[RMDB]
RNA sequence: GGGAACGACUCGAGUAGAGUCGAAAACAAACAAAGCAAAAUUGUCCAUUGGGGUCUACCGUCAGAAUUUCGGGCGGAUCUACGAAAUUAUACAGAAAGCCGGCCGCAAUGUCGUAUAGAAAGGAAACCAUGAUAGUAUGUUCGCAUACUAUCAUGGAAAAGAAACAACAACAACAAC
Reactivity to 2A3 in 0.01 (KOAc 150mM, MgCl2 10mM, bicine 150mM(pH8.5), 24C), signal-to-noise 4, nucleotides 027 to 126: c030a000a100a020c030a080a100a030g110c090a170a100a090a110u080u090g070u020c010c010a020u050u040g000g000g000g060u000c040u040a050c010c020g050u040c020a030g060a170a090u090u080u110c020g010g020g000c010g040g000a050u010c000u080a020c010g020a030a000a060u130u130a120u100a040c050a020g100a030a090a020g070c030c000g010g030c010c010g120c040a010a040u050g040u080c020g040u060a030u050a140g130a060a050a000g050g040a040a040a010
Reactivity to DMS in 0.01 (KOAc 150mM, MgCl2 10mM, bicine 150mM(pH8.5), 24C), signal-to-noise 4, nucleotides 027 to 126: c050a100a110a090c210a100a120a060g000c130a110a050a130a110u000u010g010u010c110c030a070u000u000g010g000g000g030u000c050u010a140c050c030g020u000c080a040g010a050a060u010u010u010c050g010g020g020c060g030g000a050u010c080u000a090c090g020a030a060a030u040u010a050u060a150c140a120g020a050a080a090g000c110c100g000g000c000c020g000c030a000a010u010g010u010c050g010u030a080u030a050g000a030a050a050g010g000a090a040a130